[RMDB]
RNA sequence: GGGAACGACUCGAGUAGAGUCGAAAAGUGCGGGAAGACGCUCAUUGCCAACGCAGCUGCGCAUGAGAGCGGCAUGAGAGUUAUCGGAGUCAAGGGCCCCGAACUUCUCUCCAAAUACAUCGGUGCAUGAUGUUAACGGAUUCGUCCGUUAACAUCAAAAAGAAACAACAACAACAAC
Reactivity to DMS in 0.01 (KOAc 150mM, MgCl2 10mM, bicine 150mM(pH8.5), 24C), signal-to-noise 3, nucleotides 027 to 126: g010u010g000c060g020g010g010a150a090g010a080c090g000c010u010c010a060u030u010g010c010c020a070a130c110g010c090a100g000c060u000g000c090g010c050a090u000g000a120g000a070g000c120g010g000c050a060u010g010a020g000a030g000u010u000a140u000c070g000g000a040g020u000c030a090a080g040g010g000c050c020c010c010g000a030a130c050u000u000c040u000c010u010c020c120a070a100a070u010a080c120a040u000c030g020g000u020g010c090a120
Reactivity to 2A3 in 0.01 (KOAc 150mM, MgCl2 10mM, bicine 150mM(pH8.5), 24C), signal-to-noise 2, nucleotides 027 to 126: g030u060g040c050g000g040g000a100a050g020a030c050g000c040u000c020a060u010u130g010c000c030a050a080c060g020c060a090g000c020u200g060c040g020c060a100u150g090a020g000a000g130c000g000g000c010a020u060g010a010g000a000g030u070u030a110u140c040g040g010a030g040u050c060a100a160g090g010g000c020c010c000c010g010a060a050c010u070u010c010u010c010u000c000c010a020a070a020u170a050c090a050u050c040g100g010u050g050c030a060